[RMDB]
RNA sequence: GGGAACGACUCGAGUAGAGUCGAAAAAGCCACCGCUGCGGCGGUGGCAAGUAGAAAAGUUGGUGCUUAGACCACGCCCUCUACCGUAAUAAUAGAUAAAUAGGCGAGUAUCAGUACGCUGAUACAAAAAACACUCACACGUUCGCGUGUGAGUGAACCAUGACAAAUGGUUCGCCAUUUGUCAUGGAAAAGAAACAACAACAACAAC
Reactivity to 2A3 in 0.01 (KOAc 150mM, MgCl2 10mM, bicine 150mM(pH8.5), 24C), signal-to-noise 3, nucleotides 027 to 156: a000g000c000c000a000c020c000g090c020u050g020c230g170g020c020g000g030u030g000g010c000a010a000g000u000a000g010a020a050a000a000g000u050u050g040g000u090g050c190u250u130a020g050a080c000c000a000c000g000c000c000c000u000c000u000a000c010c000g100u040a080a050u050a190a040u100a190g110a080u160a100a120a030u080a080g030g020c040g040a010g030u000a000u000c000a000g030u040a030c230g010c100u000g010a010u050a000c000a000a210a000a000a000a000c030a000c010u020c000a000c000a000c020g030u040u050c250g030c010g100u000g000u000g000a000g000u000g000a000a010

This 207-nucleotide RNA was probed chemically with 2A3. It was measured as part of the RMDB library M2RFPK. The RNA was probed in 150 mM KOAc, 10 mM MgCl2 and 150 mM bicine (pH 8.5) at 24 C.